This 177-nucleotide RNA was probed chemically with DMS. DMS adducts were read by reverse transcription with MarathonRT.
RNA sequence: GGGAACGACUCGAGUAGAGUCGAAAAGAUAUGGAAGUAGCCUUUAGUUAAUGGAAGCUCAUCGAUCUAACUGCGUCGGAAACGACGUUUAGGGAGAGCCCAUUAACUAAAGGCUACUUCCUAAGUCCUCUUUUACAUGGUUCGCCAUGUAAAAGAGAAAAGAAACAACAACAACAAC
Reactivity to DMS in 0.01 (KOAc 150mM, MgCl2 10mM, bicine 150mM(pH8.5), 24C), signal-to-noise 3, nucleotides 027 to 126: g010a130u010a300u010g000g010a030a010g010u000a000g010c000c000u000u000u000a010g000u000u010a010a000u000g000g000a150a120g050c010u010c010a300u000c270g000a040u000c000u000a010a050c300u020g010c000g000u000c000g000g000a100a110a270c000g010a010c010g030u000u000u000a010g000g010g000a010g000a010g010c010c000c000a020u000u000a000a000c010u000a010a000a020g010g000c010u010a000c010u000u000c000c000u010a010a120g000u000c060